Structure probing data (2A3 and DMS) for a 177-nucleotide construct. The RNA was probed in 150 mM KOAc, 10 mM MgCl2 and 150 mM bicine (pH 8.5) at 24 C. DMS adducts were read by reverse transcription with MarathonRT. Source: RMDB library OK2TST, as collected in RNAgym.
RNA sequence: GGGAACGACUCGAGUAGAGUCGAAAAGACCAGCGAGCUGAGCCUGGUCGCCACUGGAAAGGGGAGCAACAUCAUGUGCGGCGACCAGUCGGAUCACGUGCUGCAGCACUGGACCGUCGACAUAUCGGCUUCAUGUCUGGUUCGCCAGACAUGAAGCAAAAGAAACAACAACAACAAC
Reactivity to 2A3 in 0.01 (KOAc 150mM, MgCl2 10mM, bicine 150mM(pH8.5), 24C), signal-to-noise 2, nucleotides 027 to 126: g020a040c000c030a000g040c020g100a000g030c040u090g040a020g040c020c040u010g020g010u000c010g010c000c010a070c020u140g000g130a080a070a090g120g010g020g000a040g100c000a020a080c010a110u170c030a030u130g010u040g070c020g020g000c000g020a040c010c000a000g010u020c020g020g000a040u110c020a000c120g020u040g060c040u060g010c030a050g010c090a000c010u040g030g010a130c030c030g020u030c010g010a030c010a040u130a050u140c070g050
Reactivity to DMS in 0.01 (KOAc 150mM, MgCl2 10mM, bicine 150mM(pH8.5), 24C), signal-to-noise 2, nucleotides 027 to 126: g030a140c020c000a040g060c130g000a070g000c100u010g000a080g010c160c050u000g010g020u000c020g010c000c020a080c110u030g000g000a010a050a050g000g000g020g020a160g000c040a060a090c080a210u020c170a040u000g030u010g010c030g010g000c000g000a020c000c070a020g020u010c040g010g010a090u020c050a040c100g010u000g000c020u010g000c120a150g000c040a070c030u000g000g000a120c050c010g020u030c040g020a060c120a130u020a090u000c080g010